This 177-nucleotide RNA was probed chemically with DMS and 2A3. For DMS, 15,930 sequencing reads were counted. For DMS the reverse transcriptase was MarathonRT. For 2A3 the reverse transcriptase was SuperScript II with manganese. Values cover nucleotides 27 to 126. It was measured as part of the RMDB library OK1LIB. For 2A3, 5,221 sequencing reads were counted.

RNA sequence: GGGAACGACUCGAGUAGAGUCGAAAAGACACCCUUGGCAGAUGACCUCCUCGUUGGUGCGUGUCGGUAAUGUUGUCAGUCACAGGCAACAGUUAACGAUCUGCAUAAAUAAAAAGAGAAGAACAAAAUGCCAUUAAUUAUUCGUAAUUAAUGGCAUAAAAGAAACAACAACAACAAC
Reactivity to DMS in 0.01 (KOAc 150mM, MgCl2 10mM, bicine 150mM(pH8.5), 24C), signal-to-noise 5, nucleotides 027 to 126: g000a140c140a050c000c010c010u010u020g000g010c020a020g010a030u020g000a040c020c000u000c010c010u020c040g000u020u010g000g020u000g010c060g000u010g010u000c010g000g020u010a070a050u000g000u000u000g010u000c010a100g020u050c220a090c210a130g000g000c000a010a000c000a030g000u010u020a010a060c010g000a010u000c060u000g020c020a030u020a050a060a070u040a040a060a050a080a050g000a090g020a100a060g000a100a110c140a050a070a090
Reactivity to 2A3 in 0.01 (KOAc 150mM, MgCl2 10mM, bicine 150mM(pH8.5), 24C), signal-to-noise 5, nucleotides 027 to 126: g030a010c020a080c020c000c000u030u080g030g030c020a040g010a210u060g050a120c010c010u030c000c010u040c030g060u060u110g100g020u010g020c040g010u060g010u010c020g000g030u080a090a070u010g010u010u000g010u000c010a060g110u100c080a070c020a070g000g000c000a000a000c000a020g030u000u050a030a020c020g000a010u020c010u040g000c000a000u080a000a070a000u070a010a080a020a020a000g070a000g040a140a030g050a120a010c040a070a140a050